[RMDB]
RNA sequence: GGGAACGACUCGAGUAGAGUCGAAAAGGCCUGGAAAAGCUCUCAGCUCUUAGAGUAACAUUAAUGAAGUAACAGGAGGCAAAAGGCCUGGAGCUAUGCUCAGCUUAGGGGUAGCUGUGUCUUUACCGUACCAUAACAGUUUCGACUGUUAUGGUACAAAAGAAACAACAACAACAAC
Reactivity to DMS in 0.01 (KOAc 150mM, MgCl2 10mM, bicine 150mM(pH8.5), 24C), signal-to-noise 7, nucleotides 027 to 126: g010g010c010c000u000g000g010a140a080a110a150g000c020u020c010u000c060a200g010c020u000c030u010u010a110g020a100g020u020a070a110c150a080u020u030a080a100u020g010a110a060g010u010a080a130c130a100g010g000a040g010g010c050a040a060a110a060g000g000c010c000u000g000g000a110g000c020u010a050u010g000c020u000c020a110g010c070u010u010a070g010g000g000g000u000a030g000c020u000g010u000g000u000c020u000u000u010a070c240c120
Reactivity to 2A3 in 0.01 (KOAc 150mM, MgCl2 10mM, bicine 150mM(pH8.5), 24C), signal-to-noise 9, nucleotides 027 to 126: g020g000c020c000u030g060g020a110a110a010a050g030c020u030c010u020c060a000g000c010u010c020u110u130a050g010a020g080u060a100a050c030a080u110u220a140a100u200g160a150a020g030u050a060a010c010a050g070g030a010g070g010c020a050a110a030a050g040g000c010c000u010g000g020a020g000c020u060a020u160g100c000u020c030a050g020c040u080u140a050g000g000g010g020u020a020g010c020u020g030u020g020u050c000u040u050u030a100c080c050
Source: RMDB libraries RFM100 and RFMREP, as collected in RNAgym. This 177-nucleotide RNA was probed chemically with DMS and 2A3. For DMS the reverse transcriptase was MarathonRT.